[RMDB]
Chemical mapping of a 307-nucleotide RNA with 2A3 and DMS.

RNA sequence: GGGAACGACUCGAGUAGAGUCGAAAAGAAGGUUCUUCGGAACCUUCACACGUCGCGUGAGCGACGUGAGUCGCCGUACGCGGCGACACAGGUGCUACGGCACCUGAAGUCUUGCUUCGGCAAGACAACGAUGAUCUACGGAUCAUCGAAGUUCUCGUUCGCGAGAACAAUUGGUAUGUAAGCUACAACUUCCGGUAGCUGCGUCACACUUUAAGAGUGUGCAUACUGAGCCGAAGCUCAGCUUCGGUCCCCCAAGGGAAGACCAUAGUUGCAAGUUCGCUUGCAACAAAAGAAACAACAACAACAAC
Reactivity to 2A3 in 0.01 (KOAc 150mM, MgCl2 10mM, bicine 150mM(pH8.5), 24C), signal-to-noise 8, nucleotides 027 to 266: g000a000a000g010g000u010u020c020u040u080c250g050g010a000a000c000c000u000u000c000a000c000a000c000g000u000c000g000c040g060u130g130a160g030c000g000a000c000g000u010g000a040g000u000c000g000c010c010g020u040a030c300g020c010g130g000c000g000a000c000a000c000a010g000g000u010g000c020u050a050c280g150g000c000a000c000c000u010g060a090a020g000u000c000u000u000g000c010u030u040c180g110g000c000a000a000g000a000c000a010a020c010g000a000u010g000a000u000c000u010a040c300g120g000a000u000c000a000u000c000g000a100a030g000u000u000c010u000c010g030u050u060c220g010c010g100a000g000a000a010c010a010a100u030u020g010g000u000a000u000g000u000a010a010g000c000u000a000c000a120a080c030u000u000c000c000g000g000u000a000g000c000u000g000c000g000u000c000a000c000a000c000u060u110u300a300a110g230a010g300u000g000u000g000c000a000u000a000c000u010g010a010g010c000c000g000a000a000g010c130u180c300a070g010c000u010u000c000g000g010u020c010c000c000c000c010a060a050g100g000g000a010a010g010a010c040c030a080u150a250
Reactivity to DMS in 0.01 (KOAc 150mM, MgCl2 10mM, bicine 150mM(pH8.5), 24C), signal-to-noise 3, nucleotides 027 to 266: g010a000a010g000g010u000u000c000u000u010c190g010g010a010a000c000c000u000u000c010a100c020a040c000g020u000c010g060c010g020u020g000a300g060c040g050a020c020g010u000g000a110g010u000c010g030c010c030g030u000a080c220g060c010g010g040c000g000a010c040a130c020a020g010g030u000g020c000u000a110c170g030g010c000a020c000c000u010g000a120a140g000u000c000u010u010g010c000u000u040c180g020g020c030a030a010g000a010c020a110a230c020g000a010u010g000a010u000c000u000a140c210g050g000a010u000c000a000u000c010g010a070a080g000u000u000c030u000c000g010u000u010c160g030c010g030a020g000a000a000c000a090a030u000u000g010g000u000a010u000g000u000a300a170g000c000u000a010c000a030a070c050u000u000c020c000g000g020u000a010g000c000u000g000c000g000u010c000a000c000a010c010u000u020u030a100a050g000a020g020u000g000u000g000c010a010u000a010c000u010g010a040g010c000c000g000a010a010g010c010u010c180a100g000c020u000u010c010g000g000u000c020c020c020c040c060a180a120g010g000g040a030a030g010a240c230c170a060u000a130
Source: RMDB library POS240, as collected in RNAgym. For DMS the reverse transcriptase was MarathonRT. Reactivities are given for positions 27 through 266. For DMS, 9,864 sequencing reads were counted. 2A3 adducts were read by reverse transcription with SuperScript II with manganese.